This 177-nucleotide RNA was probed chemically with 2A3. Values cover nucleotides 27 to 126. It was measured as part of the RMDB library OK1LIB. The RNA was probed in 150 mM KOAc, 10 mM MgCl2 and 150 mM bicine (pH 8.5) at 24 C.

[RMDB]
RNA sequence: GGGAACGACUCGAGUAGAGUCGAAAACGGAAAAUUGUGGGGCGCACACGUAAUGGGCACCAUGAAUGCCUCUUUGGAUAUUCCUCUAUGGAUUUUCACCAGCAUCAUCAACUUACUUUUUGUGUAAAUGACAUGCGUGCUUCGGCACGCAUGUCAUAAAAGAAACAACAACAACAAC
Reactivity to 2A3 in 0.01 (KOAc 150mM, MgCl2 10mM, bicine 150mM(pH8.5), 24C), signal-to-noise 1, nucleotides 027 to 126: c100g000g000a000a250a030a000u080u050g010u030g000g020g080g000c090g070c010a000c000a000c070g050u070a070a070u110g160g000g000c050a000c010c010a010u080g040a030a060u120g000c000c000u000c070u090u100u000g000g000a000u000a030u170u220c000c000u000c000u020a100u130g050g050a160u160u000u070u020c070a070c000c000a010g050c000a050u000c000a000u180c100a240a000c000u000u290a300c000u100u030u060u000u080g300u120g010u080a000a260